[RMDB]
RNA sequence: GGGAACGACUCGAGUAGAGUCGAAAAUUUUGACAGGUAAUCCUGUCCUCACAAUGCAUGGGGUUCCAUUAAAAUCUUUACAACAUUCUUAAAACAAAUCAACAAACAAACAGAACCCUACUUAUUGUUAUGUUGAUGAAUGUCUUGUCUGCAUGCAAGCUGAAAAUAGGUUCGCCUAUUUUCAGCUAAAAGAAACAACAACAACAAC
Reactivity to DMS in 0.01 (KOAc 150mM, MgCl2 10mM, bicine 150mM(pH8.5), 24C), signal-to-noise 2, nucleotides 027 to 156: u000u000u000u000g030a050c010a020g040g010u000a170a150u000c010c000u010g030u000c000c070u000c080a100c080a120a190u010g030c090a070u010g010g040g000g020u020u020c010c060a100u000u000a070a060a140a100u000c030u000u000u000a080c000a020a010c010a000u000u030c030u000u010a080a110a110a140c120a050a130a080u000c030a010a040c000a040a040a030c020a020a090a200c130a110g000a040a100c090c060c030u000a100c190u010u000a120u000u000g020u000u010a110u000g000u000u000g030a010u010g010a040a030u010g000u000c060u000u000g010u000c100u010g000c010a050u000g010c040a100
Reactivity to 2A3 in 0.01 (KOAc 150mM, MgCl2 10mM, bicine 150mM(pH8.5), 24C), signal-to-noise 3, nucleotides 027 to 156: u140u150u060u100g010a000c010a000g020g020u190a140a080u180c000c000u000g000u000c020c000u100c000a110c040a060a100u090g010c020a030u030g050g030g000g000u130u030c070c010a030u130u220a040a070a050a110u050c090u090u210u160a060c030a050a010c000a010u030u030c040u080u270a130a150a090a060c070a030a160a020u020c000a010a010c010a010a010a000c000a000a040a020c020a010g060a060a060c040c020c040u030a070c020u090u170a100u070u000g000u000u040a210u150g000u000u010g010a030u040g010a030a020u010g000u010c070u050u030g020u040c050u060g040c010a030u020g020c030a020
Conditions: 150 mM KOAc, 10 mM MgCl2 and 150 mM bicine (pH 8.5), 24 C.
Chemical mapping of a 207-nucleotide RNA with DMS and 2A3.
The DMS profile rests on 3,043 reads.
The 2A3 profile rests on 2,262 reads.